[RMDB]
RNA sequence: GGGAACGACUCGAGUAGAGUCGAAAAGGACGUUGCCCGCAUGAACUUCAGUCACGGCGAUUACUCCGAUCACAAGGCUGUUUACGAUCGGGUGCGCGUCGCAUCUGAUGCAACCGGACGCGCGGUACCCGUAUGCCUACUUCGGUAGGCAUACGGGAAAAGAAACAACAACAACAAC
Reactivity to 2A3 in 0.01 (KOAc 150mM, MgCl2 10mM, bicine 150mM(pH8.5), 24C), signal-to-noise 1, nucleotides 027 to 126: g110g030a030c050g030u080u170g060c000c030c000g000c060a040u110g050a190a100c010u090u060c020a020g000u000c010a010c030g000g000c030g000a000u010u090a090c050u020c070c030g000a040u020c020a050c050a140a030g200g010c130u110g130u140u180u110a090c140g010a010u000c010g000g010g020u060g000c020g010c010g000u020c000g000c020a080u080c120u110g040a030u080g040c050a010a040c030c020g030g040a050c040g020c000g000c010g050g000u060a040
Reactivity to DMS in 0.01 (KOAc 150mM, MgCl2 10mM, bicine 150mM(pH8.5), 24C), signal-to-noise 2, nucleotides 027 to 126: g030g010a030c080g000u010u000g010c040c000c000g000c280a130u000g010a050a110c070u000u000c040a040g000u020c050a160c080g010g010c070g000a060u010u000a100c060u010c040c000g000a020u000c040a080c150a110a110g000g000c080u020g000u000u000u000a090c190g010a040u000c010g010g000g050u000g010c060g010c020g030u040c010g010c030a180u010c010u000g020a030u010g010c080a090a090c120c080g000g000a020c040g000c000g000c020g020g000u000a060
An RNA of 177 nucleotides, treated with 2A3 and DMS and read out base by base. 2A3 adducts were read by reverse transcription with SuperScript II with manganese. It was measured as part of the RMDB library OK2TST. DMS adducts were read by reverse transcription with MarathonRT.